[RMDB]
RNA sequence: GGGAACGACUCGAGUAGAGUCGAAAAAGCCAAAUGAUGUUACAAUCAUACUGAGUGCCGCUAUCGAUCUAUUUUUGAUUGAUUCUGGCGUAUAAAAGGGAUGUUCGCAGCUGCGAGGCAUUUGUCUUGGUUAUGAUGAGUUCGCUCAUCAUAACCAAAAAGAAACAACAACAACAAC
Reactivity to 2A3 in 0.01 (KOAc 150mM, MgCl2 10mM, bicine 150mM(pH8.5), 24C), signal-to-noise 4, nucleotides 027 to 126: a010g090c020c000a000a050a050u040g030a000u020g020u140u060a080c090a100a030u050c010a020u030a150c060u120g080a030g140u100g000c000c000g000c030u050a000u030c020g010a000u000c030u030a190u080u260u060u100u120g050a000u020u000g010a010u070u000c050u120g050g000c000g020u050a130u070a130a070a040a020g160g010g010a020u050g030u020u020c050g000c040a090g030c160u170g010c060g020a030g040g000c020a010u010u000u130g120u050c080u020
Reactivity to DMS in 0.01 (KOAc 150mM, MgCl2 10mM, bicine 150mM(pH8.5), 24C), signal-to-noise 2, nucleotides 027 to 126: a140g020c020c040a100a090a000u000g000a000u000g020u000u090a110c180a130a020u030c010a010u000a200c130u000g010a080g020u030g010c000c000g000c140u010a000u000c000g000a010u000c020u000a170u000u040u030u010u000g000a030u000u000g040a010u000u010c060u000g000g010c020g010u020a090u030a070a130a190a110g010g020g010a000u000g000u000u020c070g010c050a140g010c110u030g000c000g000a060g000g000c010a040u000u000u000g000u030c040u000
Record summary: Chemical mapping of a 177-nucleotide RNA with 2A3 and DMS. Conditions: 150 mM KOAc, 10 mM MgCl2 and 150 mM bicine (pH 8.5), 24 C. Source: RMDB libraries RFM100 and RFMREP, as collected in RNAgym. Values cover nucleotides 27 to 126.